An RNA of 207 nucleotides, treated with DMS and 2A3 and read out base by base. The reactions ran in a buffer of 150 mM KOAc, 10 mM MgCl2 and 150 mM bicine (pH 8.5), at 24 C. Values cover nucleotides 27 to 156. For DMS, 1,939 sequencing reads were counted. 2A3 adducts were read by reverse transcription with SuperScript II with manganese.
RNA sequence: GGGAACGACUCGAGUAGAGUCGAAAAUCCUUUCUCGAUAGAGAUUGGAGUCAUACAACCCCAGAAACCAUUACUUAUACCUUGAGUAUUGCUGAAUUCAGUUUAGCGUGCAUGCUCUUGGCUAUUCAUACCAAGGACAACUUCGGUUGUCCUUGAACCAAUGCCUAUUCUUCGGAAUAGGCAUUGGAAAAGAAACAACAACAACAAC
Reactivity to DMS in 0.01 (KOAc 150mM, MgCl2 10mM, bicine 150mM(pH8.5), 24C), signal-to-noise 2, nucleotides 027 to 156: u000c000c010u000u010u010c010u000c020g000a300u010a150g030a000g040a020u000u020g000g020a040g030u010c120a170u020a160c030a090a140c070c000c010c040a150g000a140a110a130c070c080a160u000u010a090c100u010u010a160u010a110c010c000u000u010g000a070g020u000a030u000u010g060c020u000g010a050a100u000u000c160a270g010u000u010u010a080g020c080g020u020g060c080a270u000g000c020u000c010u000u010g030g000c000u010a160u000u000c020a130u000a180c110c000a020a070g000g000a030c000a000a000c000u000u000c230g060g060u000u000g010u000c000c010u000u000g020a020a130
Reactivity to 2A3 in 0.01 (KOAc 150mM, MgCl2 10mM, bicine 150mM(pH8.5), 24C), signal-to-noise 2, nucleotides 027 to 156: u010c020c000u020u000u000c040u000c000g150a260u240a260g000a000g000a000u000u010g030g000a010g030u070c050a010u050a100c030a020a190c010c000c010c060a080g100a060a090a010c020c070a160u120u130a050c080u090u090a080u020a100c020c000u020u000g020a000g010u040a050u230u160g000c000u020g070a150a170u140u300c040a100g180u100u050u070a050g030c030g020u020g040c010a010u030g000c000u000c000u000u000g000g000c020u050a030u100u220c060a020u070a150c030c020a010a000g000g030a000c000a000a000c000u050u170c270g080g000u000u000g030u020c020c000u000u000g000a010a000